[RMDB]
RNA sequence: GGGAACGACUCGAGUAGAGUCGAAAACAAAGUCUGUUCGCAGACUUUGAAACCUGAUAUAAUCGUCAGGAAAGGUGAUUACACCUUCUUAAGCAGAAUAUAAAAGGACGCCGUUCGCGGCGUCCAAUCUUUAUCGUAUCUUCGGAUACGAUAAAGAAAAAGAAACAACAACAACAAC
Reactivity to DMS in 0.01 (KOAc 150mM, MgCl2 10mM, bicine 150mM(pH8.5), 24C), signal-to-noise 2, nucleotides 027 to 126: c000a010a010a010g010u000c000u000g030u000u030c120g020c000a010g000a010c000u010u000u020g020a090a100a150c000c000u000g010a030u000a020u000a100a080u010c140g000u000c030a020g000g000a070a030a040g010g030u000g010a230u010u020a130c040a010c000c000u000u000c050u000u000a050a110g010c140a110g030a070a100u000a050u010a070a080a130a140g000g000a000c030g000c000c020g010u000u000c160g010c030g010g030c010g000u000c000c000a020a010
Reactivity to 2A3 in 0.01 (KOAc 150mM, MgCl2 10mM, bicine 150mM(pH8.5), 24C), signal-to-noise 1, nucleotides 027 to 126: c000a000a010a010g000u000c000u010g050u050u050c110g000c050a000g010a010c000u010u010u000g020a040a000a010c010c000u000g020a010u020a020u070a150a140u120c080g020u030c010a010g000g000a030a000a000g050g000u020g040a120u140u300a190c000a000c020c000u020u020c040u070u030a110a030g000c060a030g060a300a080u150a030u070a120a130a060a050g000g000a010c000g020c040c000g040u040u080c210g020c050g120g000c000g010u010c000c000a000a000